[RMDB]
RNA sequence: GGGAACGACUCGAGUAGAGUCGAAAAGGGGUCAGGCCGAGCGUCCCGGAGAGCAUCGAUCUACCUGAAGCCUCCACGGGUAGGGAGCUCUCCCGGACGCCUAGACAGCCUGACGGAGGCACCCAAAGAACGAGCUUAGUUCGCUAAGCUCGUUCAAGUAAUAGGAGAUGUUCGCAUCUCCUAUUACAAAAGAAACAACAACAACAAC
Reactivity to DMS in 0.01 (KOAc 150mM, MgCl2 10mM, bicine 150mM(pH8.5), 24C), signal-to-noise 1, nucleotides 027 to 156: g020g020g050g010u000c010a010g000g040c010c030g000a060g000c010g020u000c000c010c070g050g020a020g010a080g000c050a210u000c150g010a130u010c020u000a020c030c000u040g000a040a130g000c000c000u010c000c030a230c080g010g000g010u010a000g000g000g000a050g000c010u010c000u000c010c010c020g010g010a010c020g040c000c110u010a080g020a030c300a090g010c000c000u020g020a010c000g020g000a000g010g050c010a240c020c020c040a060a140a190g020a010a000c010g010a010g000c000u000u000a030g020u000u000c300g040c000u000a000a010g020c000u000c010g000u000u000c010a010a180
Reactivity to 2A3 in 0.01 (KOAc 150mM, MgCl2 10mM, bicine 150mM(pH8.5), 24C), signal-to-noise 4, nucleotides 027 to 156: g070g010g060g000u010c000a000g010g020c010c020g030a020g010c000g000u000c000c000c000g000g000a000g000a000g000c000a020u300c050g000a010u010c000u000a000c000c000u020g050a130a060g010c000c000u000c000c010a010c000g010g000g000u010a010g000g010g000a010g000c000u000c000u000c010c000c000g010g000a000c000g000c000c000u020a010g000a010c000a000g000c000c000u000g000a000c010g020g020a000g010g010c010a020c000c010c010a080a120a040g010a000a000c000g000a000g000c000u010u010a000g010u100u090c170g020c140u010a000a000g000c000u000c000g000u000u000c000a000a000
The record gives the reactivity of an RNA of 207 nucleotides to DMS and 2A3. DMS adducts were read by reverse transcription with MarathonRT. It was measured as part of the RMDB library RNAMAK. The reactions ran in a buffer of 150 mM KOAc, 10 mM MgCl2 and 150 mM bicine (pH 8.5), at 24 C. High DMS reactivity at an A or C suggests that its Watson-Crick edge is free.